[RMDB]
RNA sequence: GGGAACGACUCGAGUAGAGUCGAAAAGCGUCGAUCCAUGAGAGGAAAUUGACCAUGGCCACGCCGUCACGCUCAUGGGCCGCGCGUGAGCCGUCCAGUUCUGCCUUGUUCUUGAUUGCACGCGGAAAAUGAUUAGCGUGUUCGCACGCUAAUCAUUAAAAGAAACAACAACAACAAC
Reactivity to DMS in 0.01 (KOAc 150mM, MgCl2 10mM, bicine 150mM(pH8.5), 24C), signal-to-noise 4, nucleotides 027 to 126: g020c010g020u010c040g000a010u000c020c150a030u000g010a110g000a080g010g020a060a060a050u020u010g010a090c110c200a000u010g000g010c030c020a020c050g000c040c030g010u000c070a060c120g000c170u000c120a090u010g010g010g000c050c040g000c100g010c000g010u000g000a120g020c000c010g020u000c060c030a050g010u000u000c170u010g020c000c020u020u000g020u010u000c030u000u000g000a040u000u010g010c140a020c040g010c010g010g010a040a060
Reactivity to 2A3 in 0.01 (KOAc 150mM, MgCl2 10mM, bicine 150mM(pH8.5), 24C), signal-to-noise 3, nucleotides 027 to 126: g000c010g020u050c010g040a020u000c030c070a070u110g030a030g000a010g070g110a030a130a060u090u080g050a070c110c050a130u100g010g000c000c020a040c010g040c040c010g030u070c060a050c140g070c010u130c090a120u240g030g040g000c040c030g050c020g000c000g020u010g020a070g000c010c010g020u000c020c010a010g000u060u000c030u120g060c000c020u060u100g040u190u040c000u030u040g030a030u010u050g010c170a000c010g000c060g040g020a040a230

This 177-nucleotide RNA was probed chemically with DMS and 2A3. It was measured as part of the RMDB library OK2TRN. The reactions ran in a buffer of 150 mM KOAc, 10 mM MgCl2 and 150 mM bicine (pH 8.5), at 24 C.